[RMDB]
RNA sequence: GGGAACGACUCGAGUAGAGUCGAAAACUGAUCCAGGCUCUUUGGAAGUGUUCAUGGAUUGGGAGCAUGAAAUCAUGUCCUUGUCCUACACUUAGCAGCUCGUUUUUACAAGUUUUAGAUCACAUGCGGAAUAAUUUUGUUUCGACAAAAUUAUUCCAAAAGAAACAACAACAACAAC
Reactivity to 2A3 in 0.01 (KOAc 150mM, MgCl2 10mM, bicine 150mM(pH8.5), 24C), signal-to-noise 3, nucleotides 027 to 126: c010u020g010a060u010c040c010a040g030g040c010u030c030u140u230u180g050g120a030a000g010u010g010u060u140c100a080u120g010g000a000u000u040g020g000g000a110g110c010a000u000g080a210a220a180u300c020a010u010g010u040c000c000u000u020g000u010c000c000u010a010c010a000c000u040u040a030g030c010a010g010c000u030c070g050u020u030u000u050u110a090c050a020a040g020u010u050u090u150a070g030a050u130c050a060c020a130u070g030c070
Reactivity to DMS in 0.01 (KOAc 150mM, MgCl2 10mM, bicine 150mM(pH8.5), 24C), signal-to-noise 4, nucleotides 027 to 126: c080u000g000a050u000c030c090a120g020g000c010u000c060u000u000u020g030g010a060a020g000u000g010u000u000c170a120u020g010g010a010u000u000g000g000g020a070g010c010a020u000g010a200a150a140u010c010a010u000g010u000c000c010u000u000g010u000c000c000u000a050c020a000c020u000u000a080g000c100a040g000c070u000c060g000u000u000u000u000u000a100c140a070a100g020u000u000u010u000a080g000a070u010c040a070c150a060u000g020c300

Annotation: Source: RMDB library OK2TST, as collected in RNAgym. This 177-nucleotide RNA was probed chemically with 2A3 and DMS. For DMS the reverse transcriptase was MarathonRT.